[RMDB]
Structure probing data (DMS) for a 177-nucleotide construct. The reactions ran in a buffer of 150 mM KOAc, 10 mM MgCl2 and 150 mM bicine (pH 8.5), at 24 C. Reactivities are given for positions 27 through 126.
RNA sequence: GGGAACGACUCGAGUAGAGUCGAAAAGCUGCUGGUACGGUUGUUGAUGCCGUCUUUGGCCACCUGCUGGUAGCCAUCUCCGAACUGCGCACUGAGCGCGAGGAAUUUCACGCUGCCCUGCACCGACACGCUGAUCCCUUUUCGAAGGGAUCAGCGUAAAAGAAACAACAACAACAAC
Reactivity to DMS in 0.01 (KOAc 150mM, MgCl2 10mM, bicine 150mM(pH8.5), 24C), signal-to-noise 1, nucleotides 027 to 126: g030c030u000g000c000u000g000g040u000a090c110g020g000u030u030g020u000u000g030a130u010g000c030c040g000u000c090u010u000u000g030g040c000c050a010c000c010u020g000c060u000g030g050u000a040g010c000c030a050u010c080u000c000c040g000a120a140c160u000g030c000g000c030a140c250u030g000a150g000c000g010c050g060a100g020g030a090a110u000u010u040c090a050c060g010c030u000g000c030c030c010u000g040c070a050c010c050g000a120c170